[RMDB]
RNA sequence: GGGAACGACUCGAGUAGAGUCGAAAAGUUAUAACCCCUUGCCCAGGGCCAGGAGGUGCAGACACCUUAUCAGCUACAACUCGAGUGAUCAGUGUUAUUGAAGUUGAGAGAAUUGGGUCACUGGAGCGAUCGAACGCAAAUUCGUUUGCGUUCGAUCAAAAGAAACAACAACAACAAC
Reactivity to 2A3 in 0.01 (KOAc 150mM, MgCl2 10mM, bicine 150mM(pH8.5), 24C), signal-to-noise 1, nucleotides 027 to 126: g040u090u060a150u140a230a120c040c000c020c010u020u150g000c010c000c000a030g100g050g000c000c000a010g000g040a000g000g000u010g000c000a030g090a090c010a000c030c000u010u050a100u070c020a000g020c010u130a090c010a100a010c000u010c010g050a010g020u030g040a000u030c030a030g030u000g080u270u130a120u070u090g080a160a040g070u100u120g040a060g010a010g050a100a100u160u130g110g010g000u000c000a000c040u050g050g000a070g010c050
Reactivity to DMS in 0.01 (KOAc 150mM, MgCl2 10mM, bicine 150mM(pH8.5), 24C), signal-to-noise 1, nucleotides 027 to 126: g020u010u000a100u020a090a110c010c010c000c130u000u000g010c080c020c000a030g000g000g010c050c010a070g000g000a010g000g020u000g010c110a140g000a140c060a040c010c000u000u010a150u000c060a130g040c040u000a030c100a050a150c010u000c050g000a030g020u000g000a080u000c040a080g010u000g010u000u000a170u000u000g040a080a050g040u020u000g010a090g020a160g010a110a120u000u010g000g010g000u000c010a030c000u000g020g010a030g000c130